[RMDB]
RNA sequence: GGGAACGACUCGAGUAGAGUCGAAAAACCUCCUCAACUGGCUACAUCCAGCGCCGCCUGGUCAAGGCCAUGGAGGACCUUAUGAUCAAGUAUGAUGGCACGGUGCGCACAGCGAAUGGGAGCGUGGGAGUCUAAUUGUUUUCGAACAAUUAGACUCAAAAGAAACAACAACAACAAC
Reactivity to DMS in 0.01 (KOAc 150mM, MgCl2 10mM, bicine 150mM(pH8.5), 24C), signal-to-noise 8, nucleotides 027 to 126: a130c020c000u000c010c010u000c100a150a140c180u010g010g010c020u000a140c220a120u010c010c020a030g020c060g010c120c110g020c120c010u000g010g010u000c130a100a130g000g000c010c010a060u000g010g000a080g000g010a080c040c020u010u010a070u010g010a060u000c070a040a070g010u010a060u010g010a080u000g010g010c030a040c050g000g010u000g010c120g000c050a050c050a050g010c040g010a100a080u000g000g000g000a060g010c100g030u000g010g010
Reactivity to 2A3 in 0.01 (KOAc 150mM, MgCl2 10mM, bicine 150mM(pH8.5), 24C), signal-to-noise 8, nucleotides 027 to 126: a010c010c010u020c010c000u080c040a110a110c090u030g010g010c010u050a020c020a070u040c010c000a030g010c070g130c120c070g050c020c010u010g000g000u030c050a090a090g020g000c000c010a030u080g060g020a050g020g010a020c000c000u170u200a190u210g080a070u090c060a070a030g060u050a130u190g120a050u090g050g000c020a000c070g050g000u040g010c020g000c010a050c030a080g040c030g070a080a030u120g020g010g000a050g000c040g020u080g020g130
The record gives the reactivity of an RNA of 177 nucleotides to DMS and 2A3. Conditions: 150 mM KOAc, 10 mM MgCl2 and 150 mM bicine (pH 8.5), 24 C. For 2A3, 13,306 sequencing reads were counted.